[RMDB]
RNA sequence: GGGAACGACUCGAGUAGAGUCGAAAAAACUCGAGCAAGGCGAGAUCGUUCGUGUUAUGGGUCCAGCUAAGCUCACAGUACUAAGAGGACGUGUUAUGAUACUUGGUGCAGUAUUCUCCGAGAACGACUCAUCGGUAUACUUCGGUAUACCGAUGAGAAAAGAAACAACAACAACAAC
Reactivity to DMS in 0.01 (KOAc 150mM, MgCl2 10mM, bicine 150mM(pH8.5), 24C), signal-to-noise 3, nucleotides 027 to 126: a040a010c040u000c100g020a060g050c120a080a300g000g020c010g020a240g010a070u000c010g030u000u010c120g020u010g020u000u000a080u000g020g020g010u000c020c050a220g010c050u010a040a290g000c040u010c010a100c060a080g000u010a030c070u010a070a050g010a110g030g010a080c150g010u000g010u000u000a090u010g000a160u010a040c030u000u000g000g000u000g000c040a090g000u000a080u010u000c000u000c020c060g010a100g020a030a080c100g010a160
Reactivity to 2A3 in 0.01 (KOAc 150mM, MgCl2 10mM, bicine 150mM(pH8.5), 24C), signal-to-noise 2, nucleotides 027 to 126: a000a010c050u050c050g010a010g010c030a030a040g020g000c010g010a030g010a080u000c000g110u140u080c100g030u130g050u090u140a150u190g100g020g000u000c010c010a020g000c020u010a040a000g000c000u000c000a020c020a000g030u010a030c020u030a040a010g020a050g090g020a030c060g050u050g060u210u130a110u160g070a050u030a060c030u020u040g060g000u020g070c040a030g000u060a050u050u070c080u000c000c030g080a080g030a150a010c020g070a050
This 177-nucleotide RNA was probed chemically with DMS and 2A3. As a SHAPE reagent, 2A3 marks flexible, mostly unpaired nucleotides at the ribose 2'-OH. For DMS, 1,703 sequencing reads were counted. For 2A3 the reverse transcriptase was SuperScript II with manganese. The 2A3 profile rests on 1,726 reads.